[RMDB]
RNA sequence: GGGAACGACUCGAGUAGAGUCGAAAAUACGGCAUGCUAGCCGAUAUAUUAUAUAAUGCGCCGUAUAUACGAUCGCGUAUAGCGCGCUAGCCGGCCGGCUACGGCGCAUAUCGCGCGCGAUGCUAGCCUACGCUCACAAGUUCGCUUGUGAGCGUAGAAAAGAAACAACAACAACAAC
Reactivity to DMS in 0.01 (KOAc 150mM, MgCl2 10mM, bicine 150mM(pH8.5), 24C), signal-to-noise 2, nucleotides 027 to 126: u000a070c030g000g030c000a100u000g000c030u000a060g020c010c090g000a020u000a030u020a140u020u010a190u030a120u010a060a100u010g010c030g000c050c010g000u000a050u000a140u010a090c060g010a080u010c100g000c050g020u000a080u000a040g000c030g010c100g000c070u000a050g000c030c050g000g050c150c090g010g000c050u000a060c050g000g040c010g040c030a020u000a010u000c110g010c030g000c060g000c050g020a100u010g020c030u000a070g000c060
Reactivity to 2A3 in 0.01 (KOAc 150mM, MgCl2 10mM, bicine 150mM(pH8.5), 24C), signal-to-noise 1, nucleotides 027 to 126: u080a020c030g000g000c030a040u090g030c030u050a040g010c030c000g010a000u010a020u000a000u080u270a150u050a040u050a180a130u100g000c010g030c030c000g000u000a070u010a000u030a190c040g090a130u170c050g000c000g090u020a110u040a230g080c030g000c020g000c040u000a010g030c030c010g120g100c020c050g010g020c000u030a010c020g030g020c030g010c020a000u010a000u050c040g000c000g030c030g000c010g030a040u020g030c010u000a000g050c050

The record gives the reactivity of an RNA of 177 nucleotides to DMS and 2A3.
For DMS the reverse transcriptase was MarathonRT.
High DMS reactivity at an A or C suggests that its Watson-Crick edge is free.
The DMS profile rests on 1,643 reads.
2A3 adducts were read by reverse transcription with SuperScript II with manganese.